[RMDB]
RNA sequence: GGGAACGACUCGAGUAGAGUCGAAAACAAGAAAGGCGCCACAGCAGAAGCGUUCACGUAGCAGCGCCUGUCAGAUUCUGGUGAAUCUGCGAAUUCUGCGGUAGAAAAGACACGAAAGACGUGAUAAGGAUACCUGACUAUUCGUAGUCAGGUAUCCAAAAGAAACAACAACAACAAC
Reactivity to 2A3 in 0.01 (KOAc 150mM, MgCl2 10mM, bicine 150mM(pH8.5), 24C), signal-to-noise 4, nucleotides 027 to 126: c030a020a030g190a120a070a000g020g000c010g000c080c100a120c030a070g000c000a000g000a020a000g010c010g050u060u040c030a020c070g080u060a000g000c020a000g010c000g000c000c000u020g010u010c000a000g000a010u020u000c020u230g220g040u300g050a000a000u000c000u000g020c000g040a000a040u010u000c000u000g000c000g040g050u180a070g130a090a160a010a020g080a010c070a000c200g070a090a140a010g080a030c000g000u000g010a040u060a160a000
Reactivity to DMS in 0.01 (KOAc 150mM, MgCl2 10mM, bicine 150mM(pH8.5), 24C), signal-to-noise 3, nucleotides 027 to 126: c020a050a070g000a020a160a000g030g000c000g020c010c120a170c180a160g000c030a000g010a050a100g030c030g040u060u010c060a040c020g000u020a050g010c050a160g000c000g020c000c000u000g000u040c000a000g000a010u020u000c010u020g040g030u050g000a010a030u000c010u010g000c050g020a090a070u000u030c010u000g010c000g030g030u070a060g000a120a070a030a100g000a160c210a070c150g020a050a050a080g000a020c000g000u000g000a110u060a090a200
An RNA of 177 nucleotides, treated with 2A3 and DMS and read out base by base. 2A3 adducts were read by reverse transcription with SuperScript II with manganese. The DMS profile rests on 3,362 reads. DMS adducts were read by reverse transcription with MarathonRT.